[RMDB]
Conditions: 150 mM KOAc, 10 mM MgCl2 and 150 mM bicine (pH 8.5), 24 C. The record gives the reactivity of an RNA of 177 nucleotides to 2A3 and DMS. High DMS reactivity at an A or C suggests that its Watson-Crick edge is free. For DMS, 1,982 sequencing reads were counted.
RNA sequence: GGGAACGACUCGAGUAGAGUCGAAAAAUUAUGUUGCUCUUAUGUCUCCUUUAAAUUUAUAUCUAAGUUAUGAGUAAGGUUGCCAACUCAUGUAUAUAGUGCAUCCAAAAUAUUCCAGAACAGUCAAGUUAGAGAAGUUCUUCGGAACUUCUCUAACAAAAGAAACAACAACAACAAC
Reactivity to 2A3 in 0.01 (KOAc 150mM, MgCl2 10mM, bicine 150mM(pH8.5), 24C), signal-to-noise 2, nucleotides 027 to 126: a000u170u090a030u170g030u080u080g020c000u000c000u120u100a010u120g030u000c010u060c020c000u060u070u200a120a210a080u030u170u160a130u070a060u050c010u010a110a220g040u130u050a000u060g020a000g000u020a060a100g110g060u060u090g040c070c030a060a000c100u020c070a000u070g090u080a050u010a010u010a080g050u070g020c050a000u000c000c000a000a000a000a090u200a080u030u000c030c000a000g040a150a120c000a000g160u180c060a040a170
Reactivity to DMS in 0.01 (KOAc 150mM, MgCl2 10mM, bicine 150mM(pH8.5), 24C), signal-to-noise 2, nucleotides 027 to 126: a040u010u000a080u020g000u000u000g000c060u000c030u000u000a100u010g010u020c060u000c040c040u050u010u020a110a050a150u040u000u000a030u030a040u040c010u030a090a180g010u020u010a020u000g000a020g000u010a120a060g020g000u000u030g010c000c020a020a080c040u030c000a040u000g000u000a000u050a050u010a060g000u000g010c040a060u010c100c060a020a120a070a020u020a160u000u000c010c010a140g010a060a070c160a150g010u010c120a050a100